RNA sequence: GGGAACGACUCGAGUAGAGUCGAAAAGAUAUGGAUGCGGCCUGCAUUCCCUUAGACCUCGGAAACGAGUCAGGGAAUGAACUACAGGCACGCAUCCUAAGUCAAAAGUCCAGGUUCGCCUGGACAAUCCAUGUAAAACGUUCGCGUUUUACAUGGAAAAAGAAACAACAACAACAAC
Reactivity to 2A3 in 0.01 (KOAc 150mM, MgCl2 10mM, bicine 150mM(pH8.5), 24C), signal-to-noise 3, nucleotides 027 to 126: g030a020u080a030u160g000g000a000u000g000c000g010g010c010c010u010g020c000a010u000u010c010c000c010u040u070a090g010a050c050c080u000c000g010g020a020a070a060c020g010a010g010u010c020a010g000g000g020a000a020u010g010a010a000c060u210a040c080a000g030g000c070a030c030g010c000a010u000c000c000u010a010a010g020u010c020a000a010a070a180g010u010c010c000a000g030g030u010u070c270g060c070c000u000g020g000a000c000a000a000
Reactivity to DMS in 0.01 (KOAc 150mM, MgCl2 10mM, bicine 150mM(pH8.5), 24C), signal-to-noise 4, nucleotides 027 to 126: g020a030u010a300u010g010g010a000u010g020c010g000g010c000c000u000g010c000a020u000u000c000c000c000u000u000a110g020a020c180c080u000c000g010g000a080a110a140c000g000a010g010u000c000a030g000g000g020a010a010u000g010a050a030c080u010a300c000a000g000g000c010a040c000g010c010a000u000c000c000u000a010a080g000u010c040a100a120a120a080g000u000c000c000a010g000g010u010u010c250g030c000c000u000g000g000a000c010a020a020